[RMDB]
RNA sequence: GGGAACGACUCGAGUAGAGUCGAAAAGAGCUGAAGUACAGCAAGAACGACGACAUCCUUGGCACAGCGUCGAAGAUAAGCGUGCCGAAUGCCAAGGAUUAACGGCACGCGAGGCGAAGACGCCAGACAGCGUACUCCGAUUCGUCGGAGUACGCUGAAAAGAAACAACAACAACAAC
Reactivity to DMS in 0.01 (KOAc 150mM, MgCl2 10mM, bicine 150mM(pH8.5), 24C), signal-to-noise 1, nucleotides 027 to 126: g000a100g000c000u000g000a300a030g000u030a090c000a050g120c000a070a100g010a300a200c100g000a000c000g000a110c300a090u030c030c000u010u050g000g000c000a000c300a140g060c050g010u070c090g010a110a060g010a080u000a040a010g050c000g000u000g000c000c010g000a130a050u000g060c010c010a000a000g110g000a090u000u000a010a000c070g000g000c000a000c000g000c000g000a000g000g000c000g000a050a090g000a130c000g060c000c040a060g110a090
Reactivity to 2A3 in 0.01 (KOAc 150mM, MgCl2 10mM, bicine 150mM(pH8.5), 24C), signal-to-noise 2, nucleotides 027 to 126: g110a000g000c050u020g080a170a030g130u160a110c030a000g000c000a010a060g060a070a000c030g130a000c040g000a000c040a040u000c000c010u000u000g020g020c020a030c070a170g110c080g090u100c070g040a060a020g070a100u230a130a080g000c000g000u000g000c000c010g000a070a000u030g010c010c000a000a000g010g020a000u020u000a010a000c010g000g000c020a000c000g000c020g000a050g000g030c020g070a110a040g070a040c010g000c000c060a040g010a040
An RNA of 177 nucleotides, treated with DMS and 2A3 and read out base by base. The data come from the RNA Mapping Database (RMDB), library OK1LIB. The RNA was probed in 150 mM KOAc, 10 mM MgCl2 and 150 mM bicine (pH 8.5) at 24 C. 2A3 adducts were read by reverse transcription with SuperScript II with manganese. Values cover nucleotides 27 to 126. For 2A3, 1,382 sequencing reads were counted.